[RMDB]
RNA sequence: GGGAACGACUCGAGUAGAGUCGAAAACGCACCUUGCUAUUUGCGGCUAUUUGCGUGGCUUGCGGGGUUUGCGCUUGAUGCCCACAUCACCCCACAGCGAGAAGCCGCGGAUCCUCACCGUCGGCGCGCCUAAUCAGCGAUUCGUCGCUGAUUAGGCAAAAGAAACAACAACAACAAC
Reactivity to 2A3 in 0.01 (KOAc 150mM, MgCl2 10mM, bicine 150mM(pH8.5), 24C), signal-to-noise 2, nucleotides 027 to 126: c030g000c010a020c000c010u040u060g040c050u090a080u160u130u160g060c070g040g000c040u090a200u170u120u220g070c080g030u050g070g040c030u050u010g010c000g010g000g000g050u090u190u200g040c080g000c020u020u040g050a060u110g080c030c110c010a020c040a030u120c020a060c000c030c010c000a040c010a030g040c020g040a080g020a170a030g000c010c020g000c020g020g000a030u030c000c040u040c030a070c010c010g090u150c030g050g000c050g000c030
Reactivity to DMS in 0.01 (KOAc 150mM, MgCl2 10mM, bicine 150mM(pH8.5), 24C), signal-to-noise 3, nucleotides 027 to 126: c030g010c040a060c060c020u010u010g000c050u010a120u000u000u000g020c090g000g020c030u000a100u000u000u000g000c160g020u000g020g010c040u000u010g030c040g020g000g010g030u000u000u040g030c060g010c070u000u010g010a070u010g020c020c020c030a090c120a040u010c110a150c050c040c010c020a070c070a080g000c080g010a140g000a090a140g020c000c020g000c030g010g000a080u020c080c060u010c130a160c050c020g000u030c020g030g000c010g000c140